[RMDB]
Annotation
An RNA of 177 nucleotides, treated with DMS and 2A3 and read out base by base. Values cover nucleotides 27 to 126. Source: RMDB library OK1LIB, as collected in RNAgym. The RNA was probed in 150 mM KOAc, 10 mM MgCl2 and 150 mM bicine (pH 8.5) at 24 C. For 2A3, 19,859 sequencing reads were counted.

RNA sequence: GGGAACGACUCGAGUAGAGUCGAAAACAGGGCAGUGACAGUGUGCUGGCUUGGUUAGGGUUGUAGCGGUGUGUUGACAGCCCUAGAACGGGGUACAGCAGUCCUGGGGAACUGAUGUCAUUCCUGAGGGUCUGCCGGGCUUCGGCUUGGUGGGCCCAAAAGAAACAACAACAACAAC
Reactivity to DMS in 0.01 (KOAc 150mM, MgCl2 10mM, bicine 150mM(pH8.5), 24C), signal-to-noise 9, nucleotides 027 to 126: c060a060g000g010g010c020a050g000u020g010a100c080a090g010u020g020u010g020c000u000g000g010c010u010u010g000g000u010u000a010g000g010g010u010u000g010u000a040g010c040g020g020u040g010u040g020u010u010g000a030c010a020g010c000c000c010u000a010g000a100a080c050g000g000g010g010u000a070c020a030g000c020a080g000u010c080c010u000g010g010g010g010a100a060c060u010g000a080u010g010u010c110a170u010u000c010c000u000g010a300
Reactivity to 2A3 in 0.01 (KOAc 150mM, MgCl2 10mM, bicine 150mM(pH8.5), 24C), signal-to-noise 9, nucleotides 027 to 126: c030a030g050g090g030c020a040g030u050g110a050c010a030g070u060g030u040g190c010u020g010g050c010u030u050g110g000u050u030a010g000g010g010u010u010g020u020a030g010c050g080g220u220g050u100g010u200u040g070a010c010a010g000c000c000c000u010a020g010a050a000c040g040g000g000g000u130a210c000a020g000c010a010g040u080c010c020u030g000g000g020g030a060a010c030u050g030a080u080g070u080c040a050u050u060c010c010u010g030a100